[RMDB]
RNA sequence: GGGAACGACUCGAGUAGAGUCGAAAAAAAGCACUGUUUCGGUGCGGGCCGCGAGAGCGGUACCAAAUCGAGGCAAACUCUGAAUACUAGAUAUGACCUCAAAAUAACAGGGGUCAAGGUCGGCUAGUCAAACUCAGUGAUUCGUCACUGAGUUUGAAAAAGAAACAACAACAACAAC
Reactivity to 2A3 in 0.01 (KOAc 150mM, MgCl2 10mM, bicine 150mM(pH8.5), 24C), signal-to-noise 4, nucleotides 027 to 126: a000a000a000g060c060a050c050u000g000u030u000u000c000g030g000u000g000c000g000g000g000c000c000g000c000g000a050g000a010g090c010g060g000u040a270c000c000a030a010a000u010c000g010a010g030g000c010a000a010a260c090u060c000u050g070a090a060u120a170c060u030a060g020a040u070a090u150g000a000c000c010u000c060a100a090a020a150u230a140a070c130a060g020g000g020g000u000c020a000a020g110g000u050c020g030g020c020u040a010g070
Reactivity to DMS in 0.01 (KOAc 150mM, MgCl2 10mM, bicine 150mM(pH8.5), 24C), signal-to-noise 4, nucleotides 027 to 126: a080a030a070g000c080a050c110u000g000u010u000u010c000g020g000u000g000c300g000g000g000c000c000g040c030g040a230g020a180g010c010g030g030u000a020c000c000a090a300a020u000c020g000a010g010g000c010a040a090a210c050u010c050u050g060a110a070u020a130c040u000a050g000a090u020a090u030g000a010c010c000u000c010a100a090a060a110u040a120a090c290a090g000g030g000g010u000c010a000a060g010g040u010c050g000g020c050u000a020g020